[RMDB]
RNA sequence: GGGAACGACUCGAGUAGAGUCGAAAAUGGGUGAGGCCCACGUCCAGGGGGCAGGCGACGAUUCGCGUGGGAAGCACCCGGGUGAUGACCGCGGGGAAGCGCCUUCGGUACGCCAGCAACAACCCCAAAUAGUUCGGCAUUUCGAUGCCGAACUAUUAAAAGAAACAACAACAACAAC
Reactivity to 2A3 in 0.01 (KOAc 150mM, MgCl2 10mM, bicine 150mM(pH8.5), 24C), signal-to-noise 2, nucleotides 027 to 126: u090g030g000g010u040g120a110g150g000c000c060c000a080c000g050u000c120c010a080g010g000g000g100g000c070a010g000g060c080g000a060c030g040a100u100u190c000g000c030g020u010g000g000g060a060a040g130c030a020c000c000c030g010g010g010u140g030a260u130g130a090c050c040g210c070g130g030g000g110a080a090g030c000g050c000c000u010u020c030g000g010u050a060c000g030c060c030a050g040c000a030a030c020a070a180c000c000c000c000a000
Reactivity to DMS in 0.01 (KOAc 150mM, MgCl2 10mM, bicine 150mM(pH8.5), 24C), signal-to-noise 2, nucleotides 027 to 126: u000g070g050g000u030g000a140g010g010c000c000c000a090c030g060u000c030c100a090g000g000g020g000g020c000a040g000g000c080g010a050c070g040a180u020u000c250g000c020g020u010g000g040g030a000a030g060c010a230c010c030c020g000g090g000u000g000a220u020g000a080c000c000g000c070g030g000g010g000a130a170g010c180g040c010c010u020u000c000g000g010u000a030c100g000c030c010a120g000c040a100a060c050a090a150c080c000c030c000a120